This 177-nucleotide RNA was probed chemically with 2A3 and DMS.
RNA sequence: GGGAACGACUCGAGUAGAGUCGAAAAAACACGUUUGAUAUUUGAUAUCCAUGUGGUAUCCCUAUGAAUUUGCAACACCCUCGCAGCAUUCAUAGAACCUCUUCUACACGUCGACAAGAAGCAAUUCUAAAUCGGGAGGAUUCGUCCUCCCGAUUUAAAAAGAAACAACAACAACAAC
Reactivity to 2A3 in 0.01 (KOAc 150mM, MgCl2 10mM, bicine 150mM(pH8.5), 24C), signal-to-noise 4, nucleotides 027 to 126: a000a000c030a010c020g010u050u070u100g030a020u010a040u030u070u200g130a060u020a000u060c020c070a040u040g000u020g040g050u040a070u050c030c000c000u020a070u040g100a060a030u060u040u100g020c030a030a040c040a140c020c010c000u090c050g020c010a020g000c010a010u050u040c020a010u010a080g050a040a010c010c000u000c000u060u000c010u030a040c030a000c070g050u040c020g030a040c020a020a010g030a010a000g030c010a000a110u110u060c000
Reactivity to DMS in 0.01 (KOAc 150mM, MgCl2 10mM, bicine 150mM(pH8.5), 24C), signal-to-noise 3, nucleotides 027 to 126: a060a060c000a000c010g030u010u010u080g000a020u010a030u000u020u040g000a080u000a020u010c000c300a030u060g000u000g020g020u000a060u010c020c040c020u000a090u000g000a080a030u020u020u040g000c000a090a070c150a070c040c070c030u010c090g000c020a020g000c090a020u020u010c020a030u000a030g020a060a080c060c060u000c070u000u010c070u000a070c090a060c050g000u010c030g010a040c170a070a100g040a010a070g010c150a060a080u020u000c050

The reactions ran in a buffer of 150 mM KOAc, 10 mM MgCl2 and 150 mM bicine (pH 8.5), at 24 C. For 2A3 the reverse transcriptase was SuperScript II with manganese.